[RMDB]
The record gives the reactivity of an RNA of 177 nucleotides to DMS and 2A3. It was measured as part of the RMDB library OK2TRN. Reactivities are rounded to 0.1 and cut off at 0 and 3.
RNA sequence: GGGAACGACUCGAGUAGAGUCGAAAAUUAGGCACAUCCAAAUGGCACAUAAGUAAUGAUUUUUAAGGAACAUCAGAUAAAACUCAAUAUGUUAGCCAAUCUACAGAAAAGUUCCUGGAUAGCAUACGUUAUAGCUAUCUUUCGAGAUAGCUAUAACAAAAGAAACAACAACAACAAC
Reactivity to DMS in 0.01 (KOAc 150mM, MgCl2 10mM, bicine 150mM(pH8.5), 24C), signal-to-noise 7, nucleotides 027 to 126: u010u010a070g020g000c050a080c090a060u010c040c040a060a100a140u000g010g000c030a050c030a050u000a040a090g020u010a070a120u000g000a030u000u000u010u010u010a060a150g010g010a050a050c100a040u000c080a050g000a110u010a050a050a070a060c090u000c070a060a090u000a020u000g000u010u000a070g020c020c030a060a090u000c050u000a080c110a130g010a060a060a110a150g000u010u000c010c010u010g010g000a070u000a040g000c070a060u000a070c230
Reactivity to 2A3 in 0.01 (KOAc 150mM, MgCl2 10mM, bicine 150mM(pH8.5), 24C), signal-to-noise 5, nucleotides 027 to 126: u070u040a030g050g000c040a030c010a110u040c020c010a030a050a120u060g010g020c040a020c010a040u080a080a030g080u090a170a080u060g040a050u030u050u020u050u090a110a070g090g010a050a030c030a070u080c020a030g040a080u120a120a100a020a020c030u020c050a040a060u050a010u080g020u050u070a020g000c000c000a010a040u000c030u060a050c030a050g110a070a100a010a020g010u000u010c000c000u010g010g040a040u050a040g030c040a040u040a130c080